Structure probing data (2A3 and DMS) for a 177-nucleotide construct. The RNA was probed in 150 mM KOAc, 10 mM MgCl2 and 150 mM bicine (pH 8.5) at 24 C. Reactivities are given for positions 27 through 126.

RNA sequence: GGGAACGACUCGAGUAGAGUCGAAAAAAUCUAGUGGAAUCACUUCUGCACAAACUUGACUACUGAAAUCAGUGUGCGGAAAUGCUUCUGCUACAUUAAAACGACAUAUGUGUUCGCACAUAUGUCGCCUGUAAGAUGGGUUCGCCCAUCUUACAGGAAAAGAAACAACAACAACAAC
Reactivity to 2A3 in 0.01 (KOAc 150mM, MgCl2 10mM, bicine 150mM(pH8.5), 24C), signal-to-noise 4, nucleotides 027 to 126: a000a000u030c020u010a010g000u010g000g010a020a000u010c000a000c010u000u010c010u010g020c030a010c030a050a210a090c110u150u180g030a020c020u160a040c070u280g150a120a100a080u040c000a000g010u000g000u000g020c000g010g000a000a000a000u010g000c010u010u000c000u010g020c000u020a010c010a010u110u190a070a080a040a050c030g000a000c000a000u010a000u010g010u000g010u050u040c200g020c120a010c000a000u010a000u000g010u000c000g010
Reactivity to DMS in 0.01 (KOAc 150mM, MgCl2 10mM, bicine 150mM(pH8.5), 24C), signal-to-noise 3, nucleotides 027 to 126: a040a030u000c070u000a010g040u000g000g000a030a020u000c010a010c020u000u000c000u010g000c000a010c010a020a050a110c080u020u010g010a020c070u000a290c240u020g020a100a080a110u000c010a010g000u000g010u000g000c010g010g000a010a000a020u000g000c080u000u000c000u000g010c000u000a010c130a000u000u000a050a060a090a250c010g010a020c000a000u000a000u000g020u000g000u000u020c210g010c000a000c000a010u000a000u000g000u000c000g000